[RMDB]
RNA sequence: GGGAACGACUCGAGUAGAGUCGAAAAGAUUUGGUAGAUGCUUAAUGAUGUAGAGGUUGCGAUGAAUUUUGGAUUGUUCUCUCAAGUUAGCAGGCAGGUCACUUUUCUCUUUUACGAAGGACUUCGACAGUUGGAGAUUUUUCGAAAUCUCCAACUGAAAAGAAACAACAACAACAAC
Reactivity to 2A3 in 0.01 (KOAc 150mM, MgCl2 10mM, bicine 150mM(pH8.5), 24C), signal-to-noise 5, nucleotides 027 to 126: g030a030u070u060u090g030g010u070a060g020a090u070g030c010u080u120a050a010u120g090a040u080g040u090a010g020a040g080g020u070u060g040c040g000a050u050g080a150a170u090u170u130u090g050g020a070u000u090g030u060u020c030u000c000u000c010a000a090g010u000u020a020g050c010a010g040g050c000a010g010g010u040c010a030c030u030u030u060u010c040u010c000u050u070u020u060a030c040g030a040a030g080g020a020c010u020u010c050g050a030
Reactivity to DMS in 0.01 (KOAc 150mM, MgCl2 10mM, bicine 150mM(pH8.5), 24C), signal-to-noise 4, nucleotides 027 to 126: g010a110u000u020u020g020g010u000a060g000a090u010g020c040u010u000a060a100u010g010a110u000g000u000a060g010a060g010g030u010u000g000c030g010a050u010g020a080a090u020u010u000u020g020g010a110u010u010g000u000u010c020u000c020u000c080a050a080g010u020u010a070g010c060a050g000g000c060a030g010g000u000c050a070c040u000u000u010u010c040u010c020u010u010u000u010a100c110g010a060a070g000g000a090c110u000u000c060g020a260
The record gives the reactivity of an RNA of 177 nucleotides to 2A3 and DMS. The RNA was probed in 150 mM KOAc, 10 mM MgCl2 and 150 mM bicine (pH 8.5) at 24 C. 2A3 adducts were read by reverse transcription with SuperScript II with manganese.